[RMDB]
RNA sequence: GGGAACGACUCGAGUAGAGUCGAAAAGUGUGACGGCGAGGACAGAGGAGGCGCGUCCGGCCUUCCUGAACACCUUAGGCUGGUGGGGCUGCGGCAAGAAGCGGGUCUGUUUCUUUACUUCCUCCACCGAUGGAAUGAACUUCGGUUCAUUCCAUCGAAAAGAAACAACAACAACAAC
Reactivity to DMS in 0.01 (KOAc 150mM, MgCl2 10mM, bicine 150mM(pH8.5), 24C), signal-to-noise 2, nucleotides 027 to 126: g030u010g010u010g010a090c090g000g020c120g020a090g000g000a130c060a080g010a110g020g000a070g000g010c050g020c120g000u000c030c060g000g020c020c020u000u010c020c010u000g000a120a110c130a050c060c070u010u010a070g010g000c070u010g020g030u000g010g000g020g000c010u000g020c080g000g020c090a080a060g010a060a090g000c030g000g020g000u000c080u020g020u000u000u000c010u000u000u010a080c130u010u010c000c010u010c040c090a060c130
Reactivity to 2A3 in 0.01 (KOAc 150mM, MgCl2 10mM, bicine 150mM(pH8.5), 24C), signal-to-noise 1, nucleotides 027 to 126: g080u050g020u050g060a050c040g040g020c050g010a050g020g010a030c050a080g160a080g070g010a010g000g000c030g000c020g140u060c050c000g050g010c000c000u030u030c010c030u030g030a050a000c000a110c010c070u050u070a040g030g080c040u030g000g070u070g040g000g040g000c060u110g050c060g040g000c020a030a050g020a010a000g010c000g020g000g010u030c050u090g000u000u000u030c000u010u030u020a100c030u030u030c000c010u090c030c010a040c010